An RNA of 177 nucleotides, treated with 2A3 and DMS and read out base by base.
For DMS, 10,395 sequencing reads were counted.
Conditions: 150 mM KOAc, 10 mM MgCl2 and 150 mM bicine (pH 8.5), 24 C.
For 2A3, 6,654 sequencing reads were counted.
RNA sequence: GGGAACGACUCGAGUAGAGUCGAAAACUAUAGCCGGCUGCGGCUGUUCGGCCUUUUCUUCCUGCUUGUCGUCAGCACGGUCUUCGCUGCCGAAACGCUCGCGCUGCGGGCGGCGGCCACGGCCAAAUAUAGUAUGCUAGUUCGCUAGCAUACUAUAAAAAGAAACAACAACAACAAC
Reactivity to 2A3 in 0.01 (KOAc 150mM, MgCl2 10mM, bicine 150mM(pH8.5), 24C), signal-to-noise 4, nucleotides 027 to 126: c030u060a060u260a300g090c080c070g030g020c020u030g020c030g010g030c000u000g030u040u040c010g030g000c020c020u060u140u090u090c030u080u060c000c010u040g050c040u080u140g130u150c040g080u100c040a010g010c010a020c070g020g010u000c020u090u090c070g040c070u050g000c010c000g010a080a080a030c020g000c010u010c000g030c020g060c200u230g000c000g000g000g010c000g010g000c000g000g000c010c020a020c000g010g000c010c000a000a060a000
Reactivity to DMS in 0.01 (KOAc 150mM, MgCl2 10mM, bicine 150mM(pH8.5), 24C), signal-to-noise 6, nucleotides 027 to 126: c040u000a100u000a150g020c140c120g010g010c050u000g020c040g010g020c010u000g010u000u000c080g010g010c030c080u010u000u010u010c070u010u000c020c010u000g000c040u000u000g010u000c080g010u010c080a050g010c030a080c120g000g000u000c060u000u000c150g010c100u000g010c010c010g010a040a070a100c040g000c010u000c020g010c030g020c200u010g010c020g010g010g010c010g010g010c020g010g000c000c030a040c050g010g010c010c040a070a090a120